[RMDB]
RNA sequence: GGGAACGACUCGAGUAGAGUCGAAAAUUGAGGCGGCUUAGCGGAUUAGGGCGUUCUGCCCCAGUGGUACCAUUACCCUAUGCAAAGUCUGCAUGCAGGCAGGGUAGUGUGCUGCUCGGGCACAACUGGUCGAGAGCUGGGCCGCUCUCCUGAUGAGGACUUCUAACUACUUCGGUAGUUAGAAGUCAAAAGAAACAACAACAACAAC
Reactivity to 2A3 in 0.01 (KOAc 150mM, MgCl2 10mM, bicine 150mM(pH8.5), 24C), signal-to-noise 5, nucleotides 027 to 156: u140u150g030a030g020g030c010g010g000c010u000u020a010g010c040g110g100a140u100u210a150g100g040g060c030g040u050u030c050u050g000c010c000c000c000a000g000u020g020g010u020a030c130c040a010u000u010a000c000c010c020u050a080u100g070c080a130a050a050g120u090c090u060g060c040a080u110g040c010a030g160g010c020a010g000g000g000u000a010g000u000g000u000g000c010u000g000c000u000c010g010g010g000c000a000c010a010a020c020u140g170g100u040c020g030a040g000a020g240c000u000g000g010g000c000c010g000c000u000c000u000c000c010u120g070a160u170g090a080g180
Reactivity to DMS in 0.01 (KOAc 150mM, MgCl2 10mM, bicine 150mM(pH8.5), 24C), signal-to-noise 1, nucleotides 027 to 156: u000u010g040a100g000g040c020g000g010c030u000u010a010g060c050g000g000a230u000u000a110g020g000g020c040g030u000u000c000u000g030c000c000c000c070a030g010u000g030g010u000a010c160c040a070u000u000a010c010c000c010u000a110u000g000c040a070a170a290g050u010c150u000g020c090a190u000g030c030a080g040g040c160a100g000g000g030u010a000g000u000g020u000g000c040u000g030c020u010c110g000g030g000c000a030c020a020a030c030u000g020g000u000c040g040a170g000a300g000c010u000g000g040g030c000c030g010c010u000c000u000c000c030u000g000a120u020g030a190g000